[RMDB]
RNA sequence: GGGAACGACUCGAGUAGAGUCGAAAAAAACGUGAUCGACGCUUAUGUGACCGAGAAUGUUUCGAACAGCCCCCAGACCAUCGGCGGUGUCUCGCUCAACCCAAAUUCUCUCUAUGUCGCUGUGGUCCAUGGGACGGUAUUUCGAUACCGUCCCAUGAAAAGAAACAACAACAACAAC
Reactivity to DMS in 0.01 (KOAc 150mM, MgCl2 10mM, bicine 150mM(pH8.5), 24C), signal-to-noise 4, nucleotides 027 to 126: a010a010a040c040g000u010g030a050u010c010g000a050c060g010c040u000u020a060u010g020u000g010a120c100c020g010a050g000a110a030u010g010u000u000u020c050g030a090a100c150a080g000c050c020c000c030c030a050g010a060c030c010a030u030c060g000g000c040g010g010u000g020u010c000u000c010g000c050u010c080a090a080c040c010c010a060a050a070u020u000c040u000c030u010c080u010a070u020g000u010c010g010c020u000g010u010g000g010u010c070
Reactivity to 2A3 in 0.01 (KOAc 150mM, MgCl2 10mM, bicine 150mM(pH8.5), 24C), signal-to-noise 6, nucleotides 027 to 126: a000a000a000c090g040u070g020a110u060c030g040a040c040g030c080u190u130a110u210g100u090g050a050c030c030g000a010g050a080a070u100g030u070u070u070c060g070a110a010c010a040g030c010c010c000c000c000a020g020a040c010c000a060u120c070g030g010c000g050g030u050g040u030c030u010c040g030c010u040c030a070a110c010c010c020a040a040a050u150u010c020u000c000u010c020u040a050u130g080u040c000g000c030u010g030u030g030g020u010c030

Notes:
The record gives the reactivity of an RNA of 177 nucleotides to DMS and 2A3. The data come from the RNA Mapping Database (RMDB), library OK1LIB. Reactivities are given for positions 27 through 126. The RNA was probed in 150 mM KOAc, 10 mM MgCl2 and 150 mM bicine (pH 8.5) at 24 C. For 2A3, 4,267 sequencing reads were counted. Values are in units of 0.01, from 0 to 300, in steps of 10.